[RMDB]
RNA sequence: GGGAACGACUCGAGUAGAGUCGAAAAGAUAUGGACUGCUUGGAGUCUUGAUCGAACAACAGCGAUUUCGUCGGAAACGACGAAAUCGACAUGUUCGGUUUGAGACUAUGAAGAGCAGUCCUAAGUCCAGUAAAAAAGAGUUCGCUCUUUUUUACUGAAAAGAAACAACAACAACAAC
Reactivity to 2A3 in 0.01 (KOAc 150mM, MgCl2 10mM, bicine 150mM(pH8.5), 24C), signal-to-noise 3, nucleotides 027 to 126: g020a020u100a080u200g010g000a010c020u020g000c010u030u030g030g050a010g020u020c000u000u010g010a010u030c010g020a000a000c020a030a030c020a070g130c000g000a010u000u020u010c000g020u000c020g040g050a140a060a130c020g000a000c010g000a000a000a000u000c000g020a010c000a060u070g000u000u000c000g050g070u060u160u300g020a000g000a000c020u060a300u300g040a030a050g010a000g000c010a010g000u000c000c000u000a010a010g000u000c030
Reactivity to DMS in 0.01 (KOAc 150mM, MgCl2 10mM, bicine 150mM(pH8.5), 24C), signal-to-noise 5, nucleotides 027 to 126: g020a080u000a300u010g000g010a020c000u000g010c000u000u000g000g010a020g010u010c000u000u010g010a000u000c010g000a010a010c000a040a090c300a250g020c020g010a030u000u000u000c000g020u010c000g010g000a130a120a260c020g010a020c010g010a000a000a000u000c000g010a020c100a100u000g000u000u000c000g000g030u000u000u010g020a010g010a020c000u000a230u020g010a130a240g010a000g010c000a000g000u000c010c010u010a020a100g010u010c050